Chemical mapping of a 177-nucleotide RNA with 2A3 and DMS. Values cover nucleotides 27 to 126. The DMS profile rests on 4,171 reads.
RNA sequence: GGGAACGACUCGAGUAGAGUCGAAAAACAAGCUCCAGUCUCAGAUUGUAACUGGCCUUUUUAAAGAUUGCUCUAGAGAAACUUCUGGCCUCUCACCUGCUUAUGCACCAACAUAUGUUAGUGUUGACAUUAUUGCUUACUUCGGUAAGCAAUAAUGAAAAGAAACAACAACAACAAC
Reactivity to 2A3 in 0.01 (KOAc 150mM, MgCl2 10mM, bicine 150mM(pH8.5), 24C), signal-to-noise 3, nucleotides 027 to 126: a000c000a000a030g020c010u000c040c020a010g070u000c020u010c030a100g040a270u120u110g050u080a050a050c020u020g050g000c020c010u160u120u030u030u090a090a170a020g040a060u070u130g010c010u020c030u070a020g010a020g050a150a110a060c010u050u020c010u030g050g000c000c000u000c010u000c010a030c000c010u010g000c010u080u030a040u100g020c030a020c040c010a020a040c010a060u060a030u180g060u050u050a030g010u030g010u060u010g020a000
Reactivity to DMS in 0.01 (KOAc 150mM, MgCl2 10mM, bicine 150mM(pH8.5), 24C), signal-to-noise 4, nucleotides 027 to 126: a050c090a090a090g000c050u000c020c030a050g010u010c050u010c040a070g010a130u010u000g010u010a060a060c070u000g010g000c260c020u010u000u000u010u000a030a090a110g000a090u000u000g000c040u000c040u010a080g000a090g010a100a090a060c080u010u000c050u000g000g000c040c020u000c050u000c050a050c060c030u000g000c050u000u000a050u010g000c030a050c050c050a030a030c040a080u010a090u000g010u000u000a050g010u010g020u000u000g000a160

Source: RMDB library 15KREP, as collected in RNAgym. The reactions ran in a buffer of 150 mM KOAc, 10 mM MgCl2 and 150 mM bicine (pH 8.5), at 24 C. DMS adducts were read by reverse transcription with MarathonRT.